[RMDB]
About this RNA: The record gives the reactivity of an RNA of 177 nucleotides to 2A3 and DMS. The DMS profile rests on 6,859 reads. Values cover nucleotides 27 to 126. Source: RMDB library OK1LIB, as collected in RNAgym.
RNA sequence: GGGAACGACUCGAGUAGAGUCGAAAAACUUUGGCGGGCGCACCAUCAUCUCUUUCUAUGCAUGUAUACAGCUUGCUGAGUAGUGAUGGCACGCCUGCGGUGUAUUCCACGAGUGCAUCGCAGUGGAGUAUCCACUACGGUUCGCCGUAGUGGAUACAAAAGAAACAACAACAACAAC
Reactivity to 2A3 in 0.01 (KOAc 150mM, MgCl2 10mM, bicine 150mM(pH8.5), 24C), signal-to-noise 8, nucleotides 027 to 126: a000c080u160u100u140g100g010c020g000g010g040c060g000c020a030c020c000a010u000c000a090u020c000u000c000u040u260u060c100u170a100u250g000c020a020u030g050u130a150u060a280c080a070g090c030u020u020g010c020u030g020a020g030u130a020g000u060g000a000u000g010g010c040a000c040g000c000c010u000g000c010g000g000u030g000u010a060u020u070c030c040a070c130g030a030g030u060g010c020a030u030c050g010c030a030g010u050g080g020a090
Reactivity to DMS in 0.01 (KOAc 150mM, MgCl2 10mM, bicine 150mM(pH8.5), 24C), signal-to-noise 4, nucleotides 027 to 126: a070c070u000u020u020g010g040c030g000g000g020c010g010c110a260c010c010a030u010c000a010u020c040u030c030u000u010u050c110u030a050u050g020c000a010u010g000u020a090u110a110c300a190g010c020u000u020g000c040u010g020a040g020u050a050g010u000g010a020u010g010g010c150a250c020g000c030c000u010g000c000g030g000u010g000u000a010u000u000c010c110a110c210g010a100g000u000g000c030a020u010c020g030c070a130g010u000g000g010a300